[RMDB]
RNA sequence: GGGAACGACUCGAGUAGAGUCGAAAACAGACAUCCGUUUGCCUGAGGAAAUCAAGAACACUCUCUUUAUCCUGCUUUCCGCAGUAGGCGCGCUCAUUGGCGGGCGACAGUCACCCGGCGAUGCGCUGACCUUCUCCGAUGCGAUGGAGGCCGCAGCCCCUGUGGCCUGAUUCGUCAGGCCACAGGGAAAAGAAACAACAACAACAAC
Reactivity to 2A3 in 0.01 (KOAc 150mM, MgCl2 10mM, bicine 150mM(pH8.5), 24C), signal-to-noise 2, nucleotides 027 to 156: c030a000g090a040c000a090u100c030c050g030u070u070u200g030c010c010u070g080a110g090g060a030a020a080u110c120a050a050g080a100a060c070a020c100u130c000u000c000u060u070u040a030u080c020c010u020g000c010u060u060u040c030c040g000c000a010g030u020a020g000g030c050g000c000g000c040u080c040a070u040u120g050g060c000g010g000g030c090g120a100c080a040g110u090c070a060c000c040c000g010g000c000g000a010u000g010c000g000c040u010g210a300c000c000u060u050c010u000c010c030g090a060u100g060c020g020a040u150g020g000a020g000g060c030c020g030c020a120g020c000

Source: RMDB library OK3TST, as collected in RNAgym. The record gives the reactivity of an RNA of 207 nucleotides to 2A3. The reactions ran in a buffer of 150 mM KOAc, 10 mM MgCl2 and 150 mM bicine (pH 8.5), at 24 C.